[RMDB]
RNA sequence: GGGAACGACUCGAGUAGAGUCGAAAAGAAAACUGCGGUAAAGAAGCGUACCAAAAGCUCGGCCAAGAAAAGGCCGAGCAAAGGUGCGCAAAGAACGAGCCGCAAUCGUUCAAGAAAGAAAAGAAAACCAUACCGCAUGGUUCGCCAUGCGGUAUGGAAAAGAAACAACAACAACAAC
Reactivity to 2A3 in 0.01 (KOAc 150mM, MgCl2 10mM, bicine 150mM(pH8.5), 24C), signal-to-noise 1, nucleotides 027 to 126: g080a010a010a020a000c060u070g000c020g070g000u160a090a060a060g060a130a040g010c000g000u000a000c010c000a060a000a000a060g020c000u000c000g030g000c000c000a180a050g270a300a210a010a020g000g000c000c000g020a000g020c000a000a000a000g020g000u000g000c000g010c020a000a000a000g000a030a000c000g000a000g010c000c000g000c000a000a050u040c020g000u060u060c030a010a040g110a190a140a000g170a130a100a100a040g110a000a170a000a000

Source: RMDB library OK1LIB, as collected in RNAgym. This 177-nucleotide RNA was probed chemically with 2A3. The RNA was probed in 150 mM KOAc, 10 mM MgCl2 and 150 mM bicine (pH 8.5) at 24 C. The 2A3 profile rests on 944 reads.